An RNA of 207 nucleotides, treated with DMS and 2A3 and read out base by base.
For DMS the reverse transcriptase was MarathonRT.
In probing experiments dimethyl sulfate is read out at A N1 and C N3, which are open when not base-paired.
2A3 adducts were read by reverse transcription with SuperScript II with manganese.
RNA sequence: GGGAACGACUCGAGUAGAGUCGAAAAGUGAUCACGCAAUCCGAGACCCCGCGUGAUCACGAGUUUAGGGGUCAGGACAUGUUAUGCUGGCUAUACGUACGCACCCAAGGGCUGCGGGUGCGUACGAAUCUUACGCAGCCCGCUGUUGCCAGCUAGAGGCAUAAUAUUAUUUCGAUAAUAUUAUGCCAAAAGAAACAACAACAACAAC
Reactivity to DMS in 0.01 (KOAc 150mM, MgCl2 10mM, bicine 150mM(pH8.5), 24C), signal-to-noise 1, nucleotides 027 to 156: g000u010g000a040u010c010a020c020g050c060a130a060u000c040c020g030a250g020a050c000c000c040c020g000c050g000u000g010a020u000c000a010c010g010a100g030u010u000u010a060g010g000g070g020u030c020a130g020g010a090c070a070u000g020u070u000a040u010g030c010u000g020g030c050u000a110u000a140c030g020u000a020c000g020c000a090c000c010c020a090a050g040g000g000c020u000g040c080g020g010g020u010g000c020g000u000a000c030g020a020a050u010c160u000u010a120c080g000c010a060g000c010c010c020g030c010u010g000u000u010g010c000c030a090g030c020u000a040g020a300
Reactivity to 2A3 in 0.01 (KOAc 150mM, MgCl2 10mM, bicine 150mM(pH8.5), 24C), signal-to-noise 2, nucleotides 027 to 156: g000u000g000a000u000c000a000c000g000c020a010a170u130c140c110g150a150g050a130c050c010c000c000g000c000g000u000g000a000u000c000a020c010g000a020g000u080u160u260a140g000g000g050g010u010c020a010g070g040a050c060a180u140g030u190u160a060u140g070c020u020g000g030c020u050a020u030a230c020g000u000a000c000g040c000a000c000c010c010a050a100g000g000g000c010u000g000c000g000g000g010u000g000c000g030u010a000c010g000a000a000u010c020u010u110a040c060g000c000a010g020c000c000c000g000c020u040g010u060u000g020c010c010a010g000c030u020a020g030a030
The RNA was probed in 150 mM KOAc, 10 mM MgCl2 and 150 mM bicine (pH 8.5) at 24 C. Values cover nucleotides 27 to 156.